This 177-nucleotide RNA was probed chemically with DMS and 2A3.
The reactions ran in a buffer of 150 mM KOAc, 10 mM MgCl2 and 150 mM bicine (pH 8.5), at 24 C.

[RMDB]
RNA sequence: GGGAACGACUCGAGUAGAGUCGAAAAACUACAAAGGCAGAGAAGCCCUAAGCAGAGUGAGCACCAGACUCCACAGGUUAAGGGCUCAGUCACACAGGACCGCCCUCACGUCAGACCCCAGGUGCAAGAGAAGAUUACAAUUCGUUGUAAUCUUCUCAAAAGAAACAACAACAACAAC
Reactivity to DMS in 0.01 (KOAc 150mM, MgCl2 10mM, bicine 150mM(pH8.5), 24C), signal-to-noise 8, nucleotides 027 to 126: a130c040u010a100c100a080a140a090g010g000c020a090g010a150g010a150a090g010c020c010c020u000a060a110g030c080a060g000a050g020u000g010a060g010c030a060c070c050a230g010a050c020u000c020c070a090c140a100g010g010u000u000a090a050g000g000g000c010u000c110a060g000u000c020a070c120a100c230a090g000g000a040c040c090g000c030c010c010u000c080a040c100g010u000c050a060g000a120c050c020c010c050a050g010g020u000g020c120a100a110
Reactivity to 2A3 in 0.01 (KOAc 150mM, MgCl2 10mM, bicine 150mM(pH8.5), 24C), signal-to-noise 7, nucleotides 027 to 126: a000c010u110a020c040a050a130a020g030g000c060a020g050a020g040a300a020g030c010c000c010u050a040a010g060c040a010g040a020g060u060g030a020g010c020a020c030c020a020g030a080c010u030c040c030a070c040a070g110g030u070u110a040a060g010g000g000c000u010c020a010g010u010c010a020c010a010c020a110g140g050a010c010c010g010c010c000c010u040c010a050c040g060u030c010a040g020a180c010c000c000c010a030g050g000u040g020c010a050a010